[RMDB]
RNA sequence: GGGAACGACUCGAGUAGAGUCGAAAAGCGUAACGGCUGGGUGGAACCCAACUCUAGGUGUGCUGAUUAGCGGGCUUGACUCCGUAACAAAUAGGCACUGGUGGUAAAAAGCAUCCCACCUACUCACAAAGCUCCAAAUUCUUCGGAAUUUGGAGAACGAAAGAGGAGAGUUCGCUCUCCUCUUUCGAAAAGAAACAACAACAACAAC
Reactivity to DMS in 0.01 (KOAc 150mM, MgCl2 10mM, bicine 150mM(pH8.5), 24C), signal-to-noise 1, nucleotides 027 to 156: g020c040g040u000a080a110c190g010g010c040u020g000g020g050u000g010g030a040a300c000c000c000a060a060c030u010c030u000a110g000g020u000g000u010g010c030u000g050a190u000u010a090g030c000g080g040g060c050u000u030g030a100c160u000c000c000g020u000a090a160c120a060a060a140u000a080g010g020c000a000c040u000g000g000u000g030g000u020a030a040a090a120a000g000c060a160u010c040c000c000a050c100c010u010a000c040u000c120a090c060a030a050a280g020c020u000c000c000a000a030a010u000u000c020u000u000c300g040g000a040a020u000u000u010g030g020a000g000a000a080
Reactivity to 2A3 in 0.01 (KOAc 150mM, MgCl2 10mM, bicine 150mM(pH8.5), 24C), signal-to-noise 2, nucleotides 027 to 156: g040c030g010u030a020a060c050g090g000c030u020g000g000g020u020g020g020a090a090c000c010c030a070a080c070u110c100u140a050g110g010u060g000u050g110c010u020g040a180u090u030a050g020c000g020g000g040c080u070u130g040a100c050u050c080c000g010u010a040a000c010a030a070a030u100a040g040g000c000a000c020u010g010g020u020g020g050u060a070a150a030a030a000g030c020a040u080c020c000c000a000c000c000u010a100c020u020c020a070c070a100a110a000g000c010u010c000c000a000a000a000u000u000c000u010u030c120g050g010a000a000u000u000u000g000g000a000g000a000a010